[RMDB]
The data come from the RNA Mapping Database (RMDB), library OK2TST. Chemical mapping of a 177-nucleotide RNA with 2A3 and DMS. The DMS profile rests on 7,239 reads. Conditions: 150 mM KOAc, 10 mM MgCl2 and 150 mM bicine (pH 8.5), 24 C.

RNA sequence: GGGAACGACUCGAGUAGAGUCGAAAAAUCUAGGAAGCCAAAAUCCAUGACAACUGCAUGUAAUACAUGAUCAUAGAUUGAAACAUUUUGCCAUAGAUGUCAUGACAUAAAUGGAGCAAUUAUCAAACUAUAUUAAGGGUUUCGACCCUUAAUAUAGAAAAGAAACAACAACAACAAC
Reactivity to 2A3 in 0.01 (KOAc 150mM, MgCl2 10mM, bicine 150mM(pH8.5), 24C), signal-to-noise 5, nucleotides 027 to 126: a000u050c050u040a040g050g080a080a050g070c050c020a030a040a010a070u020c040c010a010u020g020a030c030a080a050c070u060g040c040a040u060g020u090a090a030u060a180c040a020u040g020a010u070c010a020u050a160g090a140u050u090g020a050a050a020c020a020u030u080u060u100g000c020c000a060u050a070g040a030u040g010u070c020a030u050g030a020c010a050u160a050a110a050u070g020g000a070g070c030a040a090u100u060a060u200c030a060a040a050
Reactivity to DMS in 0.01 (KOAc 150mM, MgCl2 10mM, bicine 150mM(pH8.5), 24C), signal-to-noise 7, nucleotides 027 to 126: a050u000c050u010a130g010g010a080a100g010c030c060a070a110a110a080u010c050c020a080u010g010a070c080a080a110c140u010g000c030a030u000g000u010a070a070u000a300c060a040u000g000a090u000c060a040u010a070g010a030u000u000g010a060a080a070c030a030u000u000u000u000g010c020c030a030u000a100g010a120u010g010u010c070a040u010g010a030c030a020u000a010a030a020u010g010g010a090g000c050a040a040u010u000a050u010c090a070a080a170